The record gives the reactivity of an RNA of 207 nucleotides to 2A3 and DMS. The reactions ran in a buffer of 150 mM KOAc, 10 mM MgCl2 and 150 mM bicine (pH 8.5), at 24 C. High DMS reactivity at an A or C suggests that its Watson-Crick edge is free. Values cover nucleotides 27 to 156.
RNA sequence: GGGAACGACUCGAGUAGAGUCGAAAACAUUCAUCACUAUCUGCUUGGCUAUUUUGAGACUGGUAUUUCCUAAUUUGGGGUAGGAUCUGGAGCAUGAUUCUCAAACUUUGCUGCAUAUUAGAAACACUUGGGGAGCUUUAAAAAAUCCUGAUGCCCACUAAUAUCGCAUAUUCGUAUGCGAUAUUAGAAAAGAAACAACAACAACAAC
Reactivity to 2A3 in 0.01 (KOAc 150mM, MgCl2 10mM, bicine 150mM(pH8.5), 24C), signal-to-noise 5, nucleotides 027 to 156: c020a050u100u130c020a040u070c030a020c060u070a060u070c020u070g020c020u070u060g040g000c010u030a090u090u120u080u070g040a040g020a040c030u020g020g000u050a060u030u100u070c010c010u050a110a160u080u040u130g040g000g000g000u020a030g020g040a030u020c040u090g050g010a030g030c040a050u050g020a070u140u020c030u000c000a060a100a080c070u070u100u090g010c010u030g010c020a030u030a080u130u120a060g070a070a130a000c020a010c090u050u040g010g000g020g020a030g020c000u110u150u240a080a160a030a000a010a020u050c000c000u020g030a040u100g040c000c000c000a020
Reactivity to DMS in 0.01 (KOAc 150mM, MgCl2 10mM, bicine 150mM(pH8.5), 24C), signal-to-noise 2, nucleotides 027 to 156: c030a170u010u000c030a090u030c030a120c050u030a090u000c010u010g020c030u010u010g020g020c010u000a090u010u000u010u010g000a090g030a090c030u010g010g020u000a050u010u000u010c000c010u010a030a200u000u000u000g000g010g010g000u010a070g000g000a050u010c040u000g020g000a090g020c030a080u000g030a090u010u010c010u000c050a050a050a120c050u000u010u000g040c010u010g080c020a150u000a100u000u020a140g010a130a080a090c030a040c100u000u010g030g020g000g030a100g030c050u000u000u020a000a010a140a090a060a040u000c010c000u000g010a090u010g000c010c010c030a190